[RMDB]
RNA sequence: GGGAACGACUCGAGUAGAGUCGAAAAUUAAAGGAGUGAAGGUACAAGCGACAGUGUCCAACUGAGGUAAUCGACCACUGCCAGUACCAAGACGUGGGUAGUCAACUCAAAGGCAGAACGCAAAAAACUUCUUCAGAGAGUUCGCUCUCUGAAGAAGAAAAGAAACAACAACAACAAC
Reactivity to DMS in 0.01 (KOAc 150mM, MgCl2 10mM, bicine 150mM(pH8.5), 24C), signal-to-noise 1, nucleotides 027 to 126: u000u070a200a110a140g000g000a120g000u000g000a110a030g000g000u010a070c040a130a190g000c070g070a050c040a070g010u000g040u000c000c070a110a040c110u010g000a080g010g000u000a050a110u000c110g030a090c090c050a080c040u010g000c000c000a110g000u040a080c090c080a070a090g000a080c080g000u000g000g040g000u000a120g010u000c050a040a150c050u020c070a040a060a090g000g000c010a030g070a070a160c090g000c030a000a040a120a190a090a070
Structure probing data (DMS) for a 177-nucleotide construct.
The reactions ran in a buffer of 150 mM KOAc, 10 mM MgCl2 and 150 mM bicine (pH 8.5), at 24 C.
It was measured as part of the RMDB library M2PK90.